[RMDB]
RNA sequence: GGGAACGACUCGAGUAGAGUCGAAAAGAUAUGGAGACACUCGACUGUGAAGAUGGUUGUUUGUCGGAAACGAUGAUAACCAUUGGAGUCGGUGUCUCCUAAGUCAAAACCACCCUUCGGGGUGGAACACCAUCACAUGGUUCGCCAUGUGAUGGUGAAAAGAAACAACAACAACAAC
Reactivity to 2A3 in 0.01 (KOAc 150mM, MgCl2 10mM, bicine 150mM(pH8.5), 24C), signal-to-noise 3, nucleotides 027 to 126: g010a020u050a040u100g000g010a040g010a000c010a020c050u300c110g020a000c010u090g080u060g300a040a030g020a020u020g000g000u030u020g030u070u130u270g040u020c000g010g000a020a040a010c010g000a000u020g000a020u010a030a000c000c000a000u010u030g020g040a000g000u000c000g000g000u000g000u000c000u010c000c000u000a000a000g000u000c000a000a000a030a090c000c000a000c010c010c010u000u040c300g050g000g000g000u000g000g000a000a020
Reactivity to DMS in 0.01 (KOAc 150mM, MgCl2 10mM, bicine 150mM(pH8.5), 24C), signal-to-noise 2, nucleotides 027 to 126: g000a010u010a300u000g000g000a010g030a030c000a000c000u010c030g020a030c000u000g030u010g000a150a200g010a000u000g000g000u000u010g000u000u000u010g050u000c010g000g000a060a060a150c000g000a020u000g030a000u000a020a010c000c000a030u000u000g000g000a000g040u000c000g020g020u000g010u000c010u000c000c000u020a000a050g020u010c020a050a060a120a170c000c000a000c000c000c000u000u040c140g020g010g010g010u000g000g000a010a080